This 207-nucleotide RNA was probed chemically with 2A3 and DMS. High DMS reactivity at an A or C suggests that its Watson-Crick edge is free. DMS adducts were read by reverse transcription with MarathonRT. Conditions: 150 mM KOAc, 10 mM MgCl2 and 150 mM bicine (pH 8.5), 24 C. The 2A3 profile rests on 5,417 reads.

[RMDB]
RNA sequence: GGGAACGACUCGAGUAGAGUCGAAAAGGCCUAAUGGAUAAGGGUUCCUCAGCACUGCUGAUCAGCUGAGGGUUAGCCGGUCCUAAGUCUCACCGCAACUCGACUGAGACGAAAUGGGAAACAGGUUAAUAUUCCUGUGCCAUCAUGCAGUGAAAGUCACGAUAGUGUAGUUCGCUACACUAUCGUGAAAAGAAACAACAACAACAAC
Reactivity to 2A3 in 0.01 (KOAc 150mM, MgCl2 10mM, bicine 150mM(pH8.5), 24C), signal-to-noise 6, nucleotides 027 to 156: g080g010c020c010u090a120a070u170g080g010a090u080a150a220g070g000g000u050u050c010c010u030c020a010g060c030a010c040u070g020c030u070g040a130u100c070a040g000c000u030g060a010g010g020g010u020u100a000g000c000c000g030g000u030c000c000u030a120a030g000u000c000u000c000a010c000c020g020c110a070a100c070u050c050g050a030c040u020g010a010g000a010c010g020a120a120a120u120g010g000g020a060a180a030c040a040g010g020u030u050a060a020u030a100u150u110c000c010u030g020u040g020c030c000a050u070c020a010u200g000c010a000g020u030g090a160a060a010g070u030
Reactivity to DMS in 0.01 (KOAc 150mM, MgCl2 10mM, bicine 150mM(pH8.5), 24C), signal-to-noise 2, nucleotides 027 to 156: g020g030c010c020u020a080a060u000g010g000a190u000a080a130g000g000g020u010u000c010c000u000c010a120g000c030a070c100u000g020c050u010g000a090u000c050a170g000c020u000g050a030g000g020g010u000u000a020g000c020c000g000g050u000c020c020u010a100a190g010u000c000u020c010a070c020c050g050c160a170a100c180u000c020g030a090c080u020g020a050g000a080c040g000a010a100a090u010g040g010g020a060a080a040c010a040g000g030u000u000a020a160u000a130u010u000c000c020u000g010u000g000c000c070a080u010c020a110u000g010c030a120g000u000g020a130a080a070g010u000